[RMDB]
RNA sequence: GGGAACGACUCGAGUAGAGUCGAAAAGGAAGUAUGCUUCGGCAUACUUCCAAAAAACCUUUGUGUAAGGUGGGAGCCAUGGAUCCCAUUGGGAUCCCACUGGCGAAGAACACCGAUGCACUCUGGUAAAAAACAUCGAGGAUUCGUCCUCGAUGAAGCUGAUCAGAGUAUUCGUACUCUGAUCAGCAAAAGAAACAACAACAACAAC
Reactivity to 2A3 in 0.01 (KOAc 150mM, MgCl2 10mM, bicine 150mM(pH8.5), 24C), signal-to-noise 2, nucleotides 027 to 156: g020g000a050a000g020u030a000u010g020c010u070u130c290g000g000c000a000u000a000c000u090u010c030c000a010a010a030a020a020a020c000c000u000u000u020g000u000g000u000a000a020g010g000u010g000g000g010a010g000c010c010a060u200g020g000a020u010c020c000c170a140u250u300g000g000g000a010u010c010c010c020a070c050u010g000g020c050g050a100a000g020a010a000c000a000c010c010g040a060u300g000c000a020c020u000c000u000g000g020u060a140a080a040a030a000a000c000a000u000c000g000a000g000g000a000u010u110c150g060u020c070c030u000c020g000a000u000g000a000a000
Reactivity to DMS in 0.01 (KOAc 150mM, MgCl2 10mM, bicine 150mM(pH8.5), 24C), signal-to-noise 1, nucleotides 027 to 156: g040g000a090a020g030u010a000u000g010c000u010u010c300g080g000c000a010u000a040c000u000u030c000c000a010a000a070a130a060a010c020c000u010u010u000g020u010g060u000a060a200g030g000u030g000g010g020a300g020c000c000a050u020g030g000a030u020c000c000c010a300u000u010g030g030g010a000u000c040c020c050a010c280u000g000g020c000g010a140a190g000a200a110c020a010c000c000g000a140u000g050c010a040c030u000c050u010g040g000u030a000a020a190a060a050a110c000a000u010c000g010a040g000g020a120u000u000c300g000u000c000c010u000c000g000a000u000g000a060a090
An RNA of 207 nucleotides, treated with 2A3 and DMS and read out base by base. It was measured as part of the RMDB library RNAMAK. For 2A3, 1,221 sequencing reads were counted.